[RMDB]
RNA sequence: GGGAACGACUCGAGUAGAGUCGAAAAGCUAUCUUCGGAUAGCAAAAAGAUAUGGACGAGAACUACAGUUCGAUGACCAUCGAUCGUGCUUCGGAAACGAAGCACGGGAGGUCUAAGAACUGCUCGUCCUAAGUCAAAAAAGGUGCUUCGGCACCAACAUAUUCAUGUCCUUCGGGACAUGAAUAUGAAAAGAAACAACAACAACAAC
Reactivity to 2A3 in 0.01 (KOAc 150mM, MgCl2 10mM, bicine 150mM(pH8.5), 24C), signal-to-noise 4, nucleotides 027 to 156: g000c000u000a000u010c000u030u110c290g130g000a010u010a010g000c010a000a080a000a000a050g030a010u050a010u060g010g000a000c030g010a010g020a070a060c160u210a080c300a010g000u000u010c020g010a050u300g000a000c010c020a120u300c030g040a040u050c000g000u000g000c000u000u000c000g010g000a030a040a050c000g000a010a000g000c000a000c000g000g000g000a010g000g000u000c000u010a010a010g000a000a000c000u000g000c000u000c010g000u000c000c000u000a000a000g000u000c010a010a050a000a030a050a110g010g000u020g000c020u040u130c240g140g000c000a000c000c000a000a000
Reactivity to DMS in 0.01 (KOAc 150mM, MgCl2 10mM, bicine 150mM(pH8.5), 24C), signal-to-noise 3, nucleotides 027 to 156: g000c000u000a000u000c020u000u000c300g050g000a030u000a010g030c000a020a010a050a110a190g010a060u000a230u010g000g000a020c000g000a160g000a110a230c050u020a280c000a000g020u000u000c000g000a250u010g000a030c030c000a220u010c170g010a110u020c000g050u000g010c000u000u010c000g010g020a090a130a230c000g030a040a010g010c000a010c000g010g020g010a010g020g010u000c000u020a100a300g010a020a030c000u000g020c000u000c010g030u000c000c020u000a000a040g000u010c020a000a060a060a090a110a080g030g030u000g010c010u000u010c230g060g010c000a020c000c010a010a080